[RMDB]
RNA sequence: GGGAACGACUCGAGUAGAGUCGAAAAUUCUCUGAGUCAGAUGCGGAUGACCAGCCAGCGCAGCAGCACAGUGACCCAGCAGAGCCAGAAGGGCAGGCAGAGGGUGUCCUGCCUGAGGCCAGCGAAGGUUAAGUCAGGCAUUCGUGCCUGACUUAACAAAAGAAACAACAACAACAAC
Reactivity to DMS in 0.01 (KOAc 150mM, MgCl2 10mM, bicine 150mM(pH8.5), 24C), signal-to-noise 2, nucleotides 027 to 126: u000u000c010u000c010u050g010a060g060u000c020a060g010a080u000g000c070g030g000a100u010g000a120c050c020a090g010c050c020a040g040c100g050c020a080g020c050a030g020c070a030c060a080g000u010g020a160c050c020c010a200g000c020a130g030a190g000c050c020a060g030a190a220g010g000g050c010a000g000g030c030a050g010a170g010g000g030u000g000u000c010c000u000g030c000c000u020g020a140g020g020c000c050a120g020c000g000a080a060g000
Reactivity to 2A3 in 0.01 (KOAc 150mM, MgCl2 10mM, bicine 150mM(pH8.5), 24C), signal-to-noise 1, nucleotides 027 to 126: u040u000c040u000c030u080g080a030g060u030c040a050g030a130u040g060c020g080g030a100u040g040a070c040c000a020g000c010c020a070g000c060g000c050a040g060c000a000g000c010a020c000a050g020u030g060a020c000c000c000a010g000c050a000g010a030g090c010c000a030g020a060a050g040g000g000c030a010g030g000c010a020g010a080g180g100g050u050g010u060c000c000u000g060c010c020u070g000a070g000g000c000c020a020g010c010g050a080a030g110